Chemical mapping of a 177-nucleotide RNA with 2A3 and DMS.
The DMS profile rests on 16,751 reads.
High DMS reactivity at an A or C suggests that its Watson-Crick edge is free.
RNA sequence: GGGAACGACUCGAGUAGAGUCGAAAAUUGCGGGGCUUGCUGUCUGCGGUGACCUCCCUCAGCUUGCGGUAAAGCGUGGCGAGUGACAUGUCGAGCCGCUGGGCCGUCGACUGGGCAAUCUCUACGCCCCUUAUAUUUACUUCGGUAAAUAUAAGGGAAAAGAAACAACAACAACAAC
Reactivity to 2A3 in 0.01 (KOAc 150mM, MgCl2 10mM, bicine 150mM(pH8.5), 24C), signal-to-noise 5, nucleotides 027 to 126: u100u090g020c020g020g010g020g000c020u030u060g010c020u070g020u050c020u040g040c020g020g020u050g060a060c010c020u040c020c000c000u060c000a070g030c040u090u140g020c020g030g020u080a100a050a010g020c010g010u010g010g000c040g030a100g110u120g040a020c020a040u100g010u050c010g030a020g020c020c000g010c050u060g050g040g000c020c010g060u040c010g010a040c000u050g000g100g010c000a020a030u020c010u000c010u050a050c040g030c000
Reactivity to DMS in 0.01 (KOAc 150mM, MgCl2 10mM, bicine 150mM(pH8.5), 24C), signal-to-noise 8, nucleotides 027 to 126: u010u000g010c040g010g010g000g000c070u000u010g010c030u000g010u000c030u000g010c050g010g000u000g010a140c080c060u000c030c020c010u000c070a110g010c060u010u000g010c040g010g010u000a040a100a140g010c010g030u000g010g010c040g000a100g010u010g010a080c050a040u010g010u000c010g010a300g000c030c010g010c090u010g010g010g010c040c060g010u000c170g010a030c030u000g000g000g010c030a040a050u010c020u000c020u000a080c080g010c080

The data come from the RNA Mapping Database (RMDB), library OK2TST. The reactions ran in a buffer of 150 mM KOAc, 10 mM MgCl2 and 150 mM bicine (pH 8.5), at 24 C. DMS adducts were read by reverse transcription with MarathonRT.